Conditions: 150 mM KOAc, 10 mM MgCl2 and 150 mM bicine (pH 8.5), 24 C.
An RNA of 177 nucleotides, treated with DMS and read out base by base.

[RMDB]
RNA sequence: GGGAACGACUCGAGUAGAGUCGAAAAGAUAUGGACGGUAACGCGUCCUACCCACCGUCCAGGGAACACAUGGUCGGAAACGACCAUGAAAUUCCCUGGACGAGGGACGCGUUACCGUCCUAAGUCACGUUGGGUUUAAGUUCGCUUAAACCCAACGAAAAGAAACAACAACAACAAC
Reactivity to DMS in 0.01 (KOAc 150mM, MgCl2 10mM, bicine 150mM(pH8.5), 24C), signal-to-noise 1, nucleotides 027 to 126: g030a090u000a300u020g010g000a010c010g000g010u020a000a020c000g020c000g010u000c010c000u000a050c100c110c020a300c100c000g040u000c010c000a020g000g000g000a000a010c300a300c000a000u020g000g020u000c000g020g020a030a110a210c000g020a060c000c000a020u000g030a000a200a300u000u000c000c000c010u000g080g010a010c000g000a030g090g000g070a020c010g000c000g010u000u000a000c010c040g000u000c020c000u000a010a180g000u000c020a200